[RMDB]
RNA sequence: GGGAACGACUCGAGUAGAGUCGAAAAGUGCCGUAUACUUUAAAGCAAAAUGGUUGAUGCCAUUCGAAAAGGAAUUUACCAGUGAUUAUCCCUUUUACGUAUCUCCAACGGAAAUGGUAGAUGUAAGUAUGAUGUCUAUUUACGGCGAGCCAUUUAAGGUAAAUUUGUCGUUCGCGACAAAUUUACCAAAAGAAACAACAACAACAAC
Reactivity to 2A3 in 0.01 (KOAc 150mM, MgCl2 10mM, bicine 150mM(pH8.5), 24C), signal-to-noise 2, nucleotides 027 to 156: g000u000g040c020c020g030u030a050u100a050c020u160u090u130a190a000a060g110c060a150a140a040a060u030g000g010u090u140g050a170u170g010c000c000a060u030u090c030g040a070a000a000a000g050g000a040a020u110u060u060a120c020c060a060g040u050g220a130u000u210a060u110c000c000c000u000u030u050u000a070c050g020u060a060u060c020u000c010c000a010a000c080g140g010a080a060a020u050g000g020u070a020g020a010u040g060u080a030a030g010u000a050u060g110a010u110g040u020c020u040a100u090u090u030a000c000g000g000c000g010a040g000c010c010a060u110u130u120a130a070
An RNA of 207 nucleotides, treated with 2A3 and read out base by base. Conditions: 150 mM KOAc, 10 mM MgCl2 and 150 mM bicine (pH 8.5), 24 C.